This 177-nucleotide RNA was probed chemically with DMS and 2A3.
For 2A3 the reverse transcriptase was SuperScript II with manganese.
As a SHAPE reagent, 2A3 marks flexible, mostly unpaired nucleotides at the ribose 2'-OH.
For DMS, 1,548 sequencing reads were counted.
The RNA was probed in 150 mM KOAc, 10 mM MgCl2 and 150 mM bicine (pH 8.5) at 24 C.
Values cover nucleotides 27 to 126.
[RMDB]
RNA sequence: GGGAACGACUCGAGUAGAGUCGAAAACUGCCAAGUCACAUGUCUAUCUGGGGUGGUUUUACUUGGUCAGAUAUGUAUGCAUGUUUGUAAGGAUCUGUCUGACGACUGCACUUGCAACACCUAGCUACAGUAAUCCGGGAUUCGUCCCGGAUUACUGAAAAGAAACAACAACAACAAC
Reactivity to DMS in 0.01 (KOAc 150mM, MgCl2 10mM, bicine 150mM(pH8.5), 24C), signal-to-noise 2, nucleotides 027 to 126: c040u010g020c040c060a080a030g020u010c290a130c040a050u020g020u010c020u010a110u000c110u010g000g010g050g020u000g020g000u000u000u010u010a050c040u010u000g010g020u010c040a020g000a060u000a050u000g010u020a060u000g040c050a060u000g010u020u000u010g020u010a040a050g000g010a240u000c050u000g020u020c020u010g000a120c230g000a090c010u000g020c300a080c030u000u010g000c040a020a050c050a060c040c070u000a100g000c120u000a070
Reactivity to 2A3 in 0.01 (KOAc 150mM, MgCl2 10mM, bicine 150mM(pH8.5), 24C), signal-to-noise 1, nucleotides 027 to 126: c020u000g020c010c020a000a030g020u150c000a030c010a080u190g130u160c040u160a280u000c120u180g080g070g000g000u030g110g000u080u110u150u120a010c000u020u020g030g030u150c020a010g060a110u140a080u150g160u070a080u100g010c060a000u040g030u110u120u030g050u100a040a010g020g070a080u070c020u070g040u010c030u070g080a030c030g000a000c000u030g000c030a050c080u030u010g000c000a020a010c000a090c010c060u020a050g010c060u060a020